[RMDB]
RNA sequence: GGGAACGACUCGAGUAGAGUCGAAAAACGCGUCGGCUACGGCCCACGCGAAGAUUUGCAUAUAGUGUAGUAUGCAACUAAAAAUAAAGAAAUACACGUCAAGAACAGUCCGGUACGCCGGACUGAAAAAAGGACUCUUUCUUCGGAAAGAGUCCAAGGAACAUAACUGGUUCGCCAGUUAUGUUCCAAAAGAAACAACAACAACAAC
Reactivity to 2A3 in 0.01 (KOAc 150mM, MgCl2 10mM, bicine 150mM(pH8.5), 24C), signal-to-noise 2, nucleotides 027 to 156: a000c020g000c000g000u010c020g010g060c000u000a020c220g100g000c000c010c000a000c000g000c000g000a040a020g010a050u040u040u010g000c000a000u010a010u040a080g010u000g000u000a010g010u000a000u010g000c000a000a000c050u260a090a020a020a070a080u230a080a070a020g100a010a140a020u010a010c020a000c010g140u120c060a080a020g020a150a140c000a000g000u010c010c020g060g030u070a070c220g030c080c000g000g000a000c000u000g000a010a000a000a000a000a000g000g000a000c000u000c000u000u000u010c010u020u190c240g080g010a000a000a000g010a000g000u000c000c000a000a000